[RMDB]
RNA sequence: GGGAACGACUCGAGUAGAGUCGAAAAUGAGUUAAUAGGAAUAUCAAAUUUAAUCAAAAUAUGUAAAGGGAGUAGAAGUCAAUCAUCAUUUAGCUGGCAAUGCUCGGCAACACAUGCAGAUAAGUUAUCAAUGCUUCUACUUCGGUAGAAGCAUUGAAAAAGAAACAACAACAACAAC
Reactivity to DMS in 0.01 (KOAc 150mM, MgCl2 10mM, bicine 150mM(pH8.5), 24C), signal-to-noise 2, nucleotides 027 to 126: u020g010a080g030u000u010a040a050u000a080g000g050a070a100u050a100u040c040a080a090a110u000u000u010a050a000u050c030a080a110a110a110u000a030u000g000u030a000a080a120g010g030g000a090g010u000a040g000a060a080g010u010c070a030a030u000c040a040u020c100a060u030u000u070a080g050c080u020g040g040c000a060a050u020g000c040u000c040g020g050c010a080a100c110a070c190a000u050g000c090a030g000a040u000a020a060g000u010u000a070
Reactivity to 2A3 in 0.01 (KOAc 150mM, MgCl2 10mM, bicine 150mM(pH8.5), 24C), signal-to-noise 2, nucleotides 027 to 126: u060g010a000g090u080u250a170a050u090a220g020g010a060a090u050a010u160c030a030a050a180u170u200u180a070a040u050c020a000a060a240a040u230a040u080g070u180a010a050a040g160g010g000a010g050u040a010g010a130a020g050u020c020a010a000u010c040a080u000c060a090u050u000u150a090g000c010u000g010g000c020a060a090u040g000c010u000c040g030g010c010a090a000c030a070c000a000u050g030c020a060g070a090u110a060a020g090u050u060a090

Structure probing data (DMS and 2A3) for a 177-nucleotide construct. High DMS reactivity at an A or C suggests that its Watson-Crick edge is free. Source: RMDB library OK1LIB, as collected in RNAgym. The reactions ran in a buffer of 150 mM KOAc, 10 mM MgCl2 and 150 mM bicine (pH 8.5), at 24 C. Reactivities are given for positions 27 through 126.